[RMDB]
An RNA of 207 nucleotides, treated with DMS and 2A3 and read out base by base. For 2A3 the reverse transcriptase was SuperScript II with manganese. For 2A3, 2,869 sequencing reads were counted. Values cover nucleotides 27 to 156. The data come from the RNA Mapping Database (RMDB), library OK3TST.

RNA sequence: GGGAACGACUCGAGUAGAGUCGAAAAUAUCAAGCUGAUCCGUUCUGCCUGUCCAUUUAGGAUCAGCGAGGGACAGGAUGACCUCUCCGAGAGGAGUAAAAUGGUCUGUGCGACGACGUAUGACCGGACCGCUUAGUCGUCGCUUUGGUCCGGGAGACAUCGAUAAAUUAUUCGUAAUUUAUCGAUGAAAAGAAACAACAACAACAAC
Reactivity to DMS in 0.01 (KOAc 150mM, MgCl2 10mM, bicine 150mM(pH8.5), 24C), signal-to-noise 3, nucleotides 027 to 156: u000a110u000c040a090a160g030c020u000g020a040u000c010c010g000u000u000c070u000g000c030c010u000g000u000c030c010a150u010u000u020a130g020g000a030u000c030a010g010c010g030a050g010g020g010a130c040a130g020g000a140u000g010a050c040c010u020c000u000c010c010g010a300g010a300g020g000a060g010u020a040a050a070a090u000g020g010u000c010u000g020u000g010c030g020a070c010g020a040c020g020u000a100u000g030a090c030c030g020g000a080c040c040g000c100u000u000a070g020u000c010g010u010c020g010c020u000u000u000g010g020u000c020c000g000g010g010a220g010a200
Reactivity to 2A3 in 0.01 (KOAc 150mM, MgCl2 10mM, bicine 150mM(pH8.5), 24C), signal-to-noise 4, nucleotides 027 to 156: u200a020u040c060a030a020g000c000u010g000a010u020c010c020g070u230u070c060u110g080c050c030u090g050u070c070c020a080u100u160u190a030g020g000a000u010c010a000g000c010g010a050g010g030g000a000c030a040g060g020a080u080g010a000c010c000u020c010u000c020c020g040a040g030a020g060g010a010g010u070a030a050a020a050u190g030g000u000c000u020g070u050g000c000g000a000c010g010a010c010g100u120a040u180g050a050c000c040g040g000a030c020c020g050c080u060u070a020g000u010c000g000u010c020g000c000u030u080u040g010g000u000c000c000g010g020g000a030g010a010